[RMDB]
RNA sequence: GGGAACGACUCGAGUAGAGUCGAAAAGUGCUGAUUGAAAUUCAUGGGAGCCUCUCCAUAAUGGAUGAACGCCGCGGUAGUACGCGCAGUCGCGACGUAAACGCUCUGUCUUCCCGUUCAGGCCUCAGCGUACCUAGUAUUUCGAUACUAGGUACGCAAAAGAAACAACAACAACAAC
Reactivity to 2A3 in 0.01 (KOAc 150mM, MgCl2 10mM, bicine 150mM(pH8.5), 24C), signal-to-noise 2, nucleotides 027 to 126: g060u080g020c020u000g050a170u160u090g030a110a100a070u140u080c050a050u070g030g050g000a010g050c000c050u130c000u000c030c000a040u220a230a040u150g000g010a040u060g020a050a020c030g030c020c020g000c000g020g010u030a050g050u040a040c050g000c010g000c060a010g070u040c020g000c010g050a020c000g020u020a100a030a000c030g010c010u000c000u010g060u000c040u030u000c030c000c000g010u040u050c030a040g060g000c010c030u070c040a020
Reactivity to DMS in 0.01 (KOAc 150mM, MgCl2 10mM, bicine 150mM(pH8.5), 24C), signal-to-noise 3, nucleotides 027 to 126: g010u000g030c030u000g000a130u000u000g000a060a130a060u010u000c040a050u000g020g000g010a060g000c070c050u000c040u000c000c010a120u020a090a100u000g010g000a040u000g020a090a050c030g010c050c020g020c020g000g000u010a080g020u000a060c150g010c060g010c030a150g020u000c060g030c020g000a040c010g000u000a040a040a130c120g010c020u000c040u010g020u000c090u000u000c010c010c030g020u000u010c120a090g010g000c040c060u000c070a150